Notes:
Structure probing data (2A3 and DMS) for a 177-nucleotide construct. Reactivities are given for positions 27 through 126.
[RMDB]
RNA sequence: GGGAACGACUCGAGUAGAGUCGAAAAGACUGGCUGCAGGCCCACGGCCACGACGACCAGGUGCGCAACUCGAUCGCCGUCGUCAACGCGGUGCGGCCGCGCGCGGGCAAGGUCGACGUGGGCAAGGGGCUGAGGUCGAUUUCGAUCGACCUCAGCCAAAAGAAACAACAACAACAAC
Reactivity to 2A3 in 0.01 (KOAc 150mM, MgCl2 10mM, bicine 150mM(pH8.5), 24C), signal-to-noise 2, nucleotides 027 to 126: g020a040c100u030g000g070c040u090g070c090a060g040g020c020c000c010a040c020g080g000c000c010a000c030g030a000c000g010a020c020c000a070g050g110u030g020c000g000c010a040a050c050u060c130g080a130u080c030g030c030c030g040u120c010g100u140c110a070a030c110g000c010g000g070u080g010c010g040g010c010c000g000c000g030c000g010c000g060g070g010c100a150a130g030g000u000c000g000a050c000g000u010g000g020g090c010a000a060g100g030
Reactivity to DMS in 0.01 (KOAc 150mM, MgCl2 10mM, bicine 150mM(pH8.5), 24C), signal-to-noise 1, nucleotides 027 to 126: g000a170c050u000g020g010c010u000g030c040a090g000g000c000c000c000a110c190g040g000c030c000a050c060g000a150c010g010a000c000c030a130g010g010u000g000c030g000c040a110a130c070u000c060g000a110u010c060g010c010c020g000u010c080g010u020c180a050a210c170g010c000g030g000u000g000c040g000g010c090c090g010c160g010c010g010c020g020g000g000c130a090a050g010g000u010c000g030a030c010g010u000g000g000g000c050a100a130g010g010

Notes
Reactivities are rounded to 0.1 and cut off at 0 and 3. For 2A3, 1,944 sequencing reads were counted.